[RMDB]
RNA sequence: GGGAACGACUCGAGUAGAGUCGAAAAAUCUCUGGAGCAUGAUAUGGUCACGUUAGAGACAGGAAAACUAAAGCACAAAAGAAAACAUUCAUUGCAGGUCACUCAGGCCUCAGUGGCAAAGCUGUCAUCAGAACCUUGAAGGUGGCUGGGUGCGGUACACCUAAUACUAUUUCGAUAGUAUUAGGUGAAAAGAAACAACAACAACAAC
Reactivity to 2A3 in 0.01 (KOAc 150mM, MgCl2 10mM, bicine 150mM(pH8.5), 24C), signal-to-noise 5, nucleotides 027 to 156: a000u010c020u000c010u020g060g010a030g030c040a050u060g020a070u110a040u170g030g020u040c020a010c100g020u050u080a030g020a010g010a100c030a040g050g040a030a100a010a020c080u110a070a060a050g050c040a040c030a060a040a020a040g090a030a050a020a020c030a050u110u160c010a020u020u100g040c090a010g030g000u030c020a040c150u110c080a080g000g030c010c000u010c010a000g020u020g020g030c040a050a050a050g020c050u020g030u090c030a060u050c000a040g070a130a090c010c030u070u150g050a080a020g050g000u020g030g020c020u010g020g010g010u020g010c020g000g010u030a030
Reactivity to DMS in 0.01 (KOAc 150mM, MgCl2 10mM, bicine 150mM(pH8.5), 24C), signal-to-noise 4, nucleotides 027 to 156: a070u000c020u000c020u000g010g010a130g030c050a070u010g020a100u010a050u000g050g020u000c050a090c070g020u010u000a050g010a090g000a080c020a080g020g010a050a040a070a080c040u000a040a050a070g010c050a110c030a050a060a090a110g000a090a040a070a100c050a130u010u000c030a060u000u000g010c100a050g030g020u010c020a090c090u010c140a120g020g000c000c010u010c040a050g020u020g010g010c050a040a060a130g010c070u000g020u000c040a050u000c040a120g000a060a060c040c000u010u010g030a060a110g010g030u000g000g010c030u000g020g000g010u000g010c030g000g030u010a160
Chemical mapping of a 207-nucleotide RNA with 2A3 and DMS. For DMS the reverse transcriptase was MarathonRT. It was measured as part of the RMDB library OK3TST. For 2A3 the reverse transcriptase was SuperScript II with manganese. The RNA was probed in 150 mM KOAc, 10 mM MgCl2 and 150 mM bicine (pH 8.5) at 24 C.